This 307-nucleotide RNA was probed chemically with 2A3. Values are in units of 0.01, from 0 to 300, in steps of 10. Reactivities are given for positions 27 through 266. The data come from the RNA Mapping Database (RMDB), library POS240. Conditions: 150 mM KOAc, 10 mM MgCl2 and 150 mM bicine (pH 8.5), 24 C.
[RMDB]
RNA sequence: GGGAACGACUCGAGUAGAGUCGAAAAGAAGUUGCGUUCGCGCAACUUCAAGUCUGGCUUCGGCCAGACAAGGACUUCUCUACGGAGAAGUCCACCUUAUGCUACGGCAUAAGGACCAGAGCUUCGGCUCUGGAGCGGUACUACGGUACCGCAGUCGGUAACUACGGUUACCGACAGAGGCGACUUCGGUCGCCUCACCACCUGACGUGAGUCAGGUGGAAGCAAGUCUACGGACUUGCAUACGUGGUGCAUACGUUAAUGCAUAUAGUCCGGAGUUCGCUCCGGACAAAAGAAACAACAACAACAAC
Reactivity to 2A3 in 0.01 (KOAc 150mM, MgCl2 10mM, bicine 150mM(pH8.5), 24C), signal-to-noise 4, nucleotides 027 to 266: g000a000a000g000u000u000g010c000g010u010u120c270g000c010g000c090a000a000c000u000u000c000a010a000g000u000c000u000g000g010c010u020u050c290g140g000c000c000a000g000a000c000a000a070g010g000a000c000u010u000c000u000c000u020a060c300g160g000a000g000a000a000g000u000c010c000a020c000c000u000u000a000u000g000c010u020a040c270g130g000c000a000u000a000a000g000g000a000c000c010a000g000a000g010c010u090u120c300g130g000c000u000c000u000g000g000a020g010c000g010g000u000a010c010u020a010c150g080g000u010a010c000c000g000c020a000g000u000c000g000g000u000a000a000c000u010a030c220g100g010u000u000a000c010c000g000a000c010a030g000a000g010g020c010g010a000c000u040u060c260g100g000u010c000g000c000c000u000c000a000c000c000a000c000c000u000g010a000c010g100u110g100a050g010u010c000a000g000g000u000g000g000a000a020g000c000a010a000g000u000c000u030a040c300g100g000a000c000u000u000g010c010a020u120a030c010g040u070g120g020u020g070c000a010u010a040c020g190u120u140a030a000u040g000c030a000u090a020u100a100